[RMDB]
RNA sequence: GGGAACGACUCGAGUAGAGUCGAAAAUAGCUGCAACAUUAUUUGAGUAUCCUGAAAACGGGCUUUUCAGAAUGGUGUUGCCGUAUAAAGUUGUAGGAGUGCAUAGUGGCCCGUAUAGCAGGCAUUAGAGAGCUACAGAUGUUCGCAUCUGUAGCAAGACAGAGGUAUAGUUCGCUAUACCUCUGUCAAAAGAAACAACAACAACAAC
Reactivity to 2A3 in 0.01 (KOAc 150mM, MgCl2 10mM, bicine 150mM(pH8.5), 24C), signal-to-noise 2, nucleotides 027 to 156: u080a010g010c010u020g010c000a010a000c000a020u060u060a010u060u080u070g050a040g010u090a080u100c010c020u040g080a050a000a050a050c110g020g020g010c050u110u100u040u050c030a030g060a090a040u010g010g000u010g010u000u030g030c010c000g050u060a090u050a140a080a050g030u000u040g030u080a040g030g130a050g050u080g030c060a050u050a060g120u070g090g020c000c020c020g030u050a020u060a020g090c060a010g010g010c000a010u000u070a020g030a010g020a010g110c010u000a000c000a000g000a000u000g010u010u090c170g010c090a000u010c010u000g020u000a000g000c010a010a000
Reactivity to DMS in 0.01 (KOAc 150mM, MgCl2 10mM, bicine 150mM(pH8.5), 24C), signal-to-noise 1, nucleotides 027 to 156: u000a170g010c040u000g000c010a090a050c040a070u010u010a090u000u000u000g020a190g020u010a050u010c020c000u010g000a020a020a060a090c090g070g040g030c160u030u000u000u000c030a060g030a050a020u010g010g040u010g020u010u000g010c000c020g010u000a060u000a050a080a110g040u000u000g000u000a060g050g020a130g020u000g030c050a030u000a100g010u010g030g000c010c030c010g020u010a110u000a090g040c040a050g030g000c030a070u000u010a110g000a150g020a120g020c000u000a010c000a000g000a020u000g010u000u010c300g030c010a000u000c010u000g020u000a020g010c000a000a020